[RMDB]
RNA sequence: GGGAACGACUCGAGUAGAGUCGAAAACAGCUACUUGGGGGCUGCGGGUGGUGCUGAGAUGGGCAGAUCACUUGAAUCCUGGAGGUUGAGGCUGUAGUGAGCAGAGAUUGUGCCACUGCACUCCAGCCUAGGCAGUGGGAGUGAGAUGCUGUCUCAACGAAGACUAUUUCUUCGGAAAUAGUCUUCGAAAAGAAACAACAACAACAAC
Reactivity to 2A3 in 0.01 (KOAc 150mM, MgCl2 10mM, bicine 150mM(pH8.5), 24C), signal-to-noise 2, nucleotides 027 to 156: c010a040g070c040u120a030c040u160u120g010g010g000g030g010c030u050g030c040g020g050g010u050g010g010u110g070c070u040g030a030g000a020u110g020g090g040c010a000g010a070u050c000a030c000u030u060g050a110a100u070c010c010u030g100g020a030g000g030u010u010g010a070g020g000c080u010g000u000a010g000u030g040a060g000c020a000g020a030g030a130u200u300g090u040g070c000c000a010c020u010g010c000a000c000u040c040c000a010g000c020c000u000a020g080g000c010a030g010u080g040g130g000a040g000u010g020a040g010a020u010g040c000u010g050u000c020u000c000a000a030
Structure probing data (2A3) for a 207-nucleotide construct. Conditions: 150 mM KOAc, 10 mM MgCl2 and 150 mM bicine (pH 8.5), 24 C. Source: RMDB library OK3TST, as collected in RNAgym. The 2A3 profile rests on 1,260 reads.